[RMDB]
RNA sequence: GGGAACGACUCGAGUAGAGUCGAAAACGGCUAAAACCCGAUACGCGCAAACGCUACCGUAUGAGCGGAAAACGCGGCGUGUAGUACAGGAGUUUGGCGCUUACCAUGAUCUGUCAGGGAACCCCGGGCUGGGACGACGUUUCGACGUUGUCUCGGUAAAAGAAACAACAACAACAAC
Reactivity to 2A3 in 0.01 (KOAc 150mM, MgCl2 10mM, bicine 150mM(pH8.5), 24C), signal-to-noise 9, nucleotides 027 to 126: c010g040g000c010u040a010a000a010a020c000c000c000g010a010u010a010c010g000c000g000c010a020a040a010c030g000c010u010a010c000c000g020u030a130u220g130a070g030c000g010g000a040a040a000a020c040g000c000g000g000c000g000u050g000u000a020g030u050a040c060a080g000g020a110g030u000u020u010g030g000c010g000c010u010u020a020c000c000a030u020g010a030u030c030u050g060u050c030a030g000g010g030a020a020c000c010c000c000g010g060
Reactivity to DMS in 0.01 (KOAc 150mM, MgCl2 10mM, bicine 150mM(pH8.5), 24C), signal-to-noise 9, nucleotides 027 to 126: c140g000g000c010u010a040a030a040a050c060c010c010g010a100u000a010c030g010c010g000c020a060a070a300c060g010c050u000a140c010c010g010u010a100u040g010a140g000c010g000g000a040a050a100a120c120g000c300g000g000c010g010u000g000u000a010g010u030a100c120a120g000g000a080g000u000u000u000g000g010c030g010c020u010u010a070c010c010a030u010g000a040u010c050u000g000u010c040a060g000g000g010a070a060c040c000c000c020g000g010